[RMDB]
RNA sequence: GGGAACGACUCGAGUAGAGUCGAAAAGAGCUUUUUCUGCAGGCUGUAUUCCUUGUGGCACAUCAAAAAUUCUAGGAAGUACAGACACUAUCUUGCUAGGCAGUAAUUGUAUAGCAGGAAGUGAAAGUAAUGGAAAUGUGCCUUACCUGCAGCAAAAGUAUCCUGAGGUAUUCGUACCUCAGGAUACAAAAGAAACAACAACAACAAC
Reactivity to 2A3 in 0.01 (KOAc 150mM, MgCl2 10mM, bicine 150mM(pH8.5), 24C), signal-to-noise 4, nucleotides 027 to 156: g080a010g080c010u060u020u010u060u010c000u010g010c000a000g000g010c030u100g080u140a120u040u100c040c010u030u110g060u080g030g020c000a000c000a010u080c100a040a060a120a100a120u200u010c030u110a030g090g100a120a040g080u030a020c020a000g110a020c000a000c000u170a300u210c010u000u020g000c000u010a000g070g000c010a020g050u300a300a140u170u030g010u010a020u000a010g000c000a000g000g000a000a000g000u000g000a070a030a010g020u040a040a030u070g040g030a050a050a060u030g000u000g000c000c010u000u010a020c010c000u010g000c000a010g000c000a000a010a010a030
Reactivity to DMS in 0.01 (KOAc 150mM, MgCl2 10mM, bicine 150mM(pH8.5), 24C), signal-to-noise 1, nucleotides 027 to 156: g020a160g050c030u020u000u000u000u000c010u000g020c050a020g000g030c000u000g020u000a140u000u000c040c020u000u000g030u000g020g080c000a040c010a040u000c040a040a120a090a060a130u000u000c040u010a050g010g020a120a190g050u000a050c030a070g010a300c000a020c000u000a110u000c000u000u010g010c020u000a020g000g050c030a000g000u020a040a080u000u010g000u000a020u000a060g010c010a050g010g000a120a060g020u000g010a040a070a300g000u000a050a080u010g000g000a040a070a240u000g050u010g000c000c010u010u000a000c010c000u020g020c000a010g020c070a020a040a050a190

An RNA of 207 nucleotides, treated with 2A3 and DMS and read out base by base. The DMS profile rests on 2,117 reads. For 2A3, 2,201 sequencing reads were counted. The RNA was probed in 150 mM KOAc, 10 mM MgCl2 and 150 mM bicine (pH 8.5) at 24 C. DMS adducts were read by reverse transcription with MarathonRT. Values cover nucleotides 27 to 156.